Structure probing data (2A3 and DMS) for a 177-nucleotide construct.
The DMS profile rests on 5,570 reads.
Reactivities are given for positions 27 through 126.
Reactivities are rounded to 0.1 and cut off at 0 and 3.
The reactions ran in a buffer of 150 mM KOAc, 10 mM MgCl2 and 150 mM bicine (pH 8.5), at 24 C.

RNA sequence: GGGAACGACUCGAGUAGAGUCGAAAAGAUAUGGAGAAGAGCAACAGCCAUGCGGUCGGAAACGACCGUAUGGACAUGCUCCUCCUAAGUCAAAACACUUGAAAGUGCUUCGGCACUUUCAAGUGAAUCAUACAGGUACGUUCGCGUACCUGUAUGAAAAAGAAACAACAACAACAAC
Reactivity to 2A3 in 0.01 (KOAc 150mM, MgCl2 10mM, bicine 150mM(pH8.5), 24C), signal-to-noise 3, nucleotides 027 to 126: g010a010u070a030u100g020g010a030g020a300a070g000a030g020c010a000a110c070a130g130c000c010a010u020g000c010g010g030u000c000g030g000a040a030a040c010g000a000c010c000g000u000a000u000g000g000a010c000a010u010g010c000u010c010c000u000c010c000u020a050a020g010u020c020a020a000a070a150c000a000c000u010u010g010a000a000a000g010u010g010c040u100u170c300g110g010c000a000c000u000u010u000c000a000a000g000u000g000a000a000
Reactivity to DMS in 0.01 (KOAc 150mM, MgCl2 10mM, bicine 150mM(pH8.5), 24C), signal-to-noise 4, nucleotides 027 to 126: g000a020u010a200u000g010g000a000g010a090a090g010a020g010c010a030a060c260a170g010c020c000a000u010g000c010g000g010u000c010g010g000a060a070a090c000g010a010c000c000g020u000a000u000g000g000a070c060a120u000g000c010u000c010c000u000c000c000u000a020a090g000u000c010a110a120a090a180c000a010c000u010u000g000a020a000a000g010u000g010c000u000u000c220g020g020c010a000c000u000u000u000c000a000a000g010u000g000a040a080